[RMDB]
RNA sequence: GGGAACGACUCGAGUAGAGUCGAAAAGCUCGUCCACUCCGAUCGAGCCACUAGGAGCUAUCGGAACUCUUAGCGGAGUGACCAAAUGUCUCGACUUCAGUUGGACAUCGUGAGAUCGAGGUCCAAAGACGUUUGAUGCCUUCGGGUAUCGAACGUCAAAAGAAACAACAACAACAAC
Reactivity to DMS in 0.01 (KOAc 150mM, MgCl2 10mM, bicine 150mM(pH8.5), 24C), signal-to-noise 9, nucleotides 027 to 126: g010c010u000c030g000u000c030c060a090c030u010c030c020g000a080u010c050g010a060g010c020c020a280c090u010a050g000g000a020g000c030u000a100u020c160g000g020a230a100c010u000c000u000u000a070g000c150g010g000a030g000u010g000a120c050c050a060a080a050u010g010u010c010u010c020g010a120c100u020u020c100a090g020u000u000g000g000a020c020a020u000c010g000u000g000a110g000a110u030c020g010a020g010g010u020c000c010a040a040a110
Reactivity to 2A3 in 0.01 (KOAc 150mM, MgCl2 10mM, bicine 150mM(pH8.5), 24C), signal-to-noise 9, nucleotides 027 to 126: g020c000u010c020g020u020c030c010a020c010u000c000c010g020a050u060c040g040a010g010c000c000a020c020u040a030g010g010a030g010c020u040a050u130c060g030g040a030a020c000u000c000u020u030a010g020c020g020g000a010g000u020g030a060c010c020a030a020a040u070g010u000c010u020c040g050a050c030u110u070c100a070g010u030u020g000g000a000c000a020u000c010g020u040g070a120g010a040u120c010g000a010g000g020u000c000c000a010a020a020